[RMDB]
RNA sequence: GGGAACGACUCGAGUAGAGUCGAAAAAGGCGAGGUUUAUCAAUUCAGUGGCUAAUGUCAGCGCCAGUCCUUCACCGCGGACGGAUUCACUGAUAGCAACGCAUUUAAUAAUAUUUCCGGCAAUUCCAGACUCGUAUCUUUUCGAAGAUACGAGUCUAAAAGAAACAACAACAACAAC
Reactivity to DMS in 0.01 (KOAc 150mM, MgCl2 10mM, bicine 150mM(pH8.5), 24C), signal-to-noise 2, nucleotides 027 to 126: a070g010g030c020g030a040g010g020u000u000u010a080u030c110a070a100u020u000c030a080g020u000g010g040c080u010a050a130u000g020u000c010a030g000c000g000c050c030a120g000u010c060c030u010u000c030a130c190c010g010c080g020g000a040c000g000g000a170u000u000c050a030c050u000g000a030u000a030g000c020a010a070c060g010c060a010u000u000u000a060a070u020a040a070u000a150u000u000u010c010c010g040g010c160a100a150u000u030c120c030
Reactivity to 2A3 in 0.01 (KOAc 150mM, MgCl2 10mM, bicine 150mM(pH8.5), 24C), signal-to-noise 1, nucleotides 027 to 126: a000g040g000c020g030a020g000g030u010u100u080a160u070c120a020a030u240u000c010a020g000u060g030g040c030u160a150a000u150g070u040c020a000g020c000g040c070c000a010g020u040c010c000u070u110c060a020c070c020g000c010g010g000a010c020g060g010a050u060u030c020a020c070u020g040a030u030a040g000c030a000a090c030g040c010a020u040u110u160a210a160u160a110a000u030a110u110u020u000c050c000g040g040c010a040a090u140u070c060c000